[RMDB]
RNA sequence: GGGAACGACUCGAGUAGAGUCGAAAAGAUCCUGAAUGUCUUCCACGAGCUGAACCUGAAGGAUGCCAUCAGCUACGUGGCUGAGGUAGCAGAGCCGCUUGCUCUGCCGGGUCGGGGCUGCAGCAGGCGAUGGCCGUUGAUUCGUCAACGGCCAUCGAAAAGAAACAACAACAACAAC
Reactivity to 2A3 in 0.01 (KOAc 150mM, MgCl2 10mM, bicine 150mM(pH8.5), 24C), signal-to-noise 1, nucleotides 027 to 126: g010a090u030c000c000u010g090a130a090u090g030u000c020u040u040c030c010a020c040g000a030g020c010u020g060a120a160c010c050u050g030a200a110g150g030a110u070g000c010c020a180u010c000a000g000c010u140a210c040g090u120g020g020c010u010g010a020g010g010u040a010g000c030a000g000a020g000c040c080g140c150u070u210g030c030u000c000u000g020c000c000g020g000g000u070c020g050g020g000g000c030u000g000c000a030g000c050a000g140g000
Reactivity to DMS in 0.01 (KOAc 150mM, MgCl2 10mM, bicine 150mM(pH8.5), 24C), signal-to-noise 2, nucleotides 027 to 126: g000a070u000c000c010u020g020a080a110u010g000u010c020u000u010c020c020a070c030g000a040g010c050u000g000a060a200c100c040u000g050a130a060g010g000a130u000g010c120c080a210u000c000a030g010c000u020a070c180g030u000g010g000c150u020g010a020g020g020u000a100g030c050a010g010a060g010c030c300g000c140u010u010g000c000u010c010u000g010c030c060g050g000g020u010c070g000g010g000g000c030u000g030c020a070g000c010a070g020g030